RNA sequence: GGGAACGACUCGAGUAGAGUCGAAAAAUAAAUAGCGCACUAAAGACGCUGAUCUUUAGUUACCUAGCAACUUUAGUGCAGAGAUCCGAGUUCCUAGGUCCCAUGUCGGACCUUACUAAGAAAAAAACAUGUAGUUAUCCUUCGGGAUAACUACAUGAAAAGAAACAACAACAACAAC
Reactivity to DMS in 0.01 (KOAc 150mM, MgCl2 10mM, bicine 150mM(pH8.5), 24C), signal-to-noise 4, nucleotides 027 to 126: a110u020a060a090a070u010a150g010c150g010c030a030c000u000a000a000a000g000a110c300g000c020u000g000a020u010c020u000u010u010a070g010u000u010a030c060c020u010a020g030c010a130a270c010u000u000u000a010g020u010g010c010a140g000a090g000a080u010c050c060g020a130g010u000u000c000c010u010a020g000g000u000c000c000c050a130u000g000u010c130g000g000a010c000c000u000u010a020c170u010a080a120g020a020a000a050a090a090a070a080
Reactivity to 2A3 in 0.01 (KOAc 150mM, MgCl2 10mM, bicine 150mM(pH8.5), 24C), signal-to-noise 3, nucleotides 027 to 126: a000u120a010a060a030u100a050g070c040g010c020a010c010u010a000a010a010g030a020c020g000c070u000g020a050u000c040u090u250u030a090g050u120u070a150c020c060u050a010g020c000a020a090c000u030u020u010a000g000u010g020c030a000g010a000g000a080u080c060c050g000a040g000u010u010c010c000u000a000g010g000u030c010c010c000a270u300g110u280c090g000g000a000c010c000u000u020a040c030u070a080a110g120a040a070a050a010a000a000a020